[RMDB]
RNA sequence: GGGAACGACUCGAGUAGAGUCGAAAAAUCGAAUGUCCAUAGGCAGAGAAACCUCUGGAGUCCUCUAGACCGCAAGGAGGAAAUUACCAGCAGGGGGUGAUCCACCCGGAGAUGAGCGGACAAGCCAAAAGCUCUCGGUUCGCCGAGAGCAAAAGAAACAACAACAACAAC
Reactivity to DMS in 0.01 (KOAc 150mM, MgCl2 10mM, bicine 150mM(pH8.5), 24C), signal-to-noise 3, nucleotides 027 to 129: a130u090c070g020a040a030u010g000u000c000c030a060u010a110g000g000c020a120g010a100g070a040a150a060c000c020u000c010u010g030g040a150g020u000c010c040u010c010u040a080g020a130c090c100g020c150a040a090g030g000a040g000g020a000a050a080u070u030a050c000c000a050g060c170a110g000g000g000g000g000u010g010a090u050c000c000a130c070c020c000g020g020a070g000a000u050g010a010g030c010g050g010a040c050a020a120g020c000c000a000a120a090a160
Reactivity to 2A3 in 0.01 (KOAc 150mM, MgCl2 10mM, bicine 150mM(pH8.5), 24C), signal-to-noise 3, nucleotides 027 to 129: a000u110c040g040a050a080u140g030u040c000c010a040u030a050g010g040c010a000g020a000g010a150a040a030c000c000u000c020u000g010g020a040g040u030c020c000u000c010u050a060g070a160c030c000g060c120a070a050g030g030a000g000g000a000a020a010u140u080a110c000c020a000g030c000a010g010g000g010g000g010u040g010a150u000c020c000a030c010c040c000g050g000a050g020a030u140g010a030g010c010g010g020a020c040a020a010g030c030c000a030a070a050a050